RNA sequence: GGGAACGACUCGAGUAGAGUCGAAAAGGAUAGGUGAUAAGGGAGCAUCCUAGAGUAAGUCAUCCUGCUAGUCGUCUGUUCCCUCAUCUAUAAAAUAAGGACAUAACUUGCCAGAAUACACUGGGGGCAUAAGAAGGAUGCAACACAUUACCUAAUAAAUUUAGUAGGUCUUCGGACCUACUAAAUUAAAAGAAACAACAACAACAAC
Reactivity to 2A3 in 0.01 (KOAc 150mM, MgCl2 10mM, bicine 150mM(pH8.5), 24C), signal-to-noise 2, nucleotides 027 to 156: g140g020a080u050a010g000g010u000g010a040u060a080a140g050g030g000a030g000c000a010u050c010c010u020a010g010a010g140u100a060a040g000u030c020a080u060c030c000u020g000c000u010a010g040u020c060g050u030c100u010g040u040u040c010c010c020u000c000a050u040c040u060a080u110a100a080a010a020u170a020a040g070g010a000c030a080u130a090a060c050u030u060g010c030c010a030g070a160a080u090a070c130a030c130u060g000g000g030g020g000c010a080u070a120a060g070a020a000g010g010a000u010g040c010a020a020c020a020c000a010u000u140a010c060c000u130a080a040u300a140
Reactivity to DMS in 0.01 (KOAc 150mM, MgCl2 10mM, bicine 150mM(pH8.5), 24C), signal-to-noise 2, nucleotides 027 to 156: g010g030a150u030a000g000g010u000g020a060u010a100a010g010g050g020a260g040c010a090u010c000c020u000a090g020a060g020u000a040a110g000u000c070a090u000c060c000u040g010c040u000a070g020u000c050g040u020c050u000g000u000u000c000c000c000u000c020a080u000c060u000a170u000a060a100a110a110u000a070a120g010g030a090c030a070u000a040a030c050u000u000g010c070c030a140g000a070a070u000a070c090a120c040u000g000g000g010g000g030c050a140u010a050a100g020a100a070g000g010a040u000g040c000a100a090c020a100c020a030u000u000a060c050c010u000a020a070u020a060

The record gives the reactivity of an RNA of 207 nucleotides to 2A3 and DMS. In probing experiments dimethyl sulfate is read out at A N1 and C N3, which are open when not base-paired. For 2A3 the reverse transcriptase was SuperScript II with manganese.